[RMDB]
An RNA of 170 nucleotides, treated with DMS and 2A3 and read out base by base. For 2A3 the reverse transcriptase was SuperScript II with manganese. The data come from the RNA Mapping Database (RMDB), library 15KLIB. Conditions: 150 mM KOAc, 10 mM MgCl2 and 150 mM bicine (pH 8.5), 24 C.
RNA sequence: GGGAACGACUCGAGUAGAGUCGAAAAGGGAGGUGCACCUGUAAAAAAAGUAGCCUUUGGCGGUGAUCAAGUACAUGAGGUUGCUGCUGUAAGAAGUGUUACUGUCGAGUACAACAUUCAUGCUGUAAGAGCACCAUCUUCGGAUGGUGCAAAAGAAACAACAACAACAAC
Reactivity to DMS in 0.01 (KOAc 150mM, MgCl2 10mM, bicine 150mM(pH8.5), 24C), signal-to-noise 4, nucleotides 027 to 129: g000g000g000a080g000g020u010g050c000a100c020c020u020g020u040a010a010a000a080a110a080a040g020u010a000g020c000c040u000u000u000g020g020c000g000g000u010g000a000u030c050a070a090g050u070a100c220a120u050g020a120g000g000u000u000g000c020u020g000c030u000g000u000a080a110g000a080a030g040u020g020u010u050a040c000u000g000u050c140g010a090g020u070a080c080a070a000c080a100u030u020c060a070u030g030c070u020g020u050a040a050g030a100
Reactivity to 2A3 in 0.01 (KOAc 150mM, MgCl2 10mM, bicine 150mM(pH8.5), 24C), signal-to-noise 5, nucleotides 027 to 129: g020g000g010a000g000g020u000g000c000a010c010c040u050g100u110a010a050a030a000a000a020a020g030u040a010g020c010c000u030u030u090g020g000c030g020g010u030g010a030u050c050a060a080g110u140a120c110a130u160g100a040g030g000u010u020g010c010u000g010c000u010g020u110a070a020g040a050a000g050u040g020u250u030a020c020u010g140u160c080g010a040g010u030a020c000a050a000c000a060u070u070c030a010u080g020c020u020g030u080a070a010g010a010